The record gives the reactivity of an RNA of 177 nucleotides to DMS and 2A3.

RNA sequence: GGGAACGACUCGAGUAGAGUCGAAAAAGCCUACCAGUACGCUGGUAGGCAACCAUCAAAUGCGUCUAGUAUCAAAAUCAUGUAAAAACUGUAAAACAGAUUUUGUAUGAGACGCAUUUCGAUGAAAUUAUGGGAAGAUGUUCGCAUCUUCCCAUAAAAAAGAAACAACAACAACAAC
Reactivity to DMS in 0.01 (KOAc 150mM, MgCl2 10mM, bicine 150mM(pH8.5), 24C), signal-to-noise 3, nucleotides 027 to 126: a070g010c000c020u010a000c000c000a000g010u000a060c230g050c010u000g000g000u000a000g000g030c010a000a030c070c000a000u000c010a000a000a010u000g000c030g030u000c000u000a180g030u010a060u060c010a010a020a020a000u010c000a090u010g020u000a050a040a140a130a160c260u040g050u030a040a120a130a050c000a000g000a000u000u000u000u000g000u010a050u140g000a030g000a010c010g000c000a000u000u000u000c140g030a000u000g010a110a100a070
Reactivity to 2A3 in 0.01 (KOAc 150mM, MgCl2 10mM, bicine 150mM(pH8.5), 24C), signal-to-noise 5, nucleotides 027 to 126: a000g000c000c000u000a000c020c000a000g030u060a030c280g040c110u000g000g000u000a000g000g000c000a000a020c000c000a000u010c000a010a000a010u010g000c010g020u000c010u010a020g030u050a040u160c010a010a000a010a000u050c120a240u070g020u110a010a080a040a110a140c190u250g130u200a050a070a050a050c010a010g000a000u000u010u000u010g040u030a010u030g020a000g000a000c010g000c000a000u000u000u010c000g000a000u000g020a030a010a040

It was measured as part of the RMDB library RFM100.
The DMS profile rests on 4,453 reads.
Reactivities are given for positions 27 through 126.
DMS adducts were read by reverse transcription with MarathonRT.
For 2A3, 3,322 sequencing reads were counted.